[RMDB]
RNA sequence: GGGAACGACUCGAGUAGAGUCGAAAACUACAUUUCUAGAAUCCAAGGCCCAGUGGGGAGGGGAGAAGACUGCCUUCUUCCUCAUUGGAGGGUGGAUAUCAAGGCUUCCAUCUCCAGCUCCUCCUUGCUUCACUGUGCUAUUCGUAGCACAGUGAAGAAAAGAAACAACAACAACAAC
Reactivity to 2A3 in 0.01 (KOAc 150mM, MgCl2 10mM, bicine 150mM(pH8.5), 24C), signal-to-noise 1, nucleotides 027 to 126: c010u100a060c030a160u150u200u090c020u080a040g070a090a050u020c040c000a030a020g080g000c000c000c000a030g040u110g000g000g020g000a000g000g000g030g000a030g000a000a020g090a030c100u110g030c020c000u020u070c010u040u030c010c030u000c040a070u040u170g110g010a020g030g020g030u090g010g020a040u000a060u230c090a080a060g070g000c000u040u000c030c030a070u000c000u020c000c000a060g020c010u010c010c000u080c010c000u000u060g060
Reactivity to DMS in 0.01 (KOAc 150mM, MgCl2 10mM, bicine 150mM(pH8.5), 24C), signal-to-noise 1, nucleotides 027 to 126: c000u000a140c140a160u000u020u000c040u000a100g000a140a080u020c050c010a110a130g000g010c020c020c060a070g040u000g050g000g010g000a010g000g000g010g010a040g020a060a100g000a170c110u000g000c050c000u000u000c020u000u000c000c020u010c050a160u000u010g000g010a040g030g030g030u000g000g020a070u010a110u000c160a110a030g000g000c050u000u000c030c030a030u000c000u010c000c030a050g000c040u000c010c010u010c020c010u030u010g000
This 177-nucleotide RNA was probed chemically with 2A3 and DMS. 2A3 is a SHAPE reagent: it acylates the 2'-hydroxyl of flexible nucleotides of all four kinds. Conditions: 150 mM KOAc, 10 mM MgCl2 and 150 mM bicine (pH 8.5), 24 C. For DMS, 1,117 sequencing reads were counted. For DMS the reverse transcriptase was MarathonRT.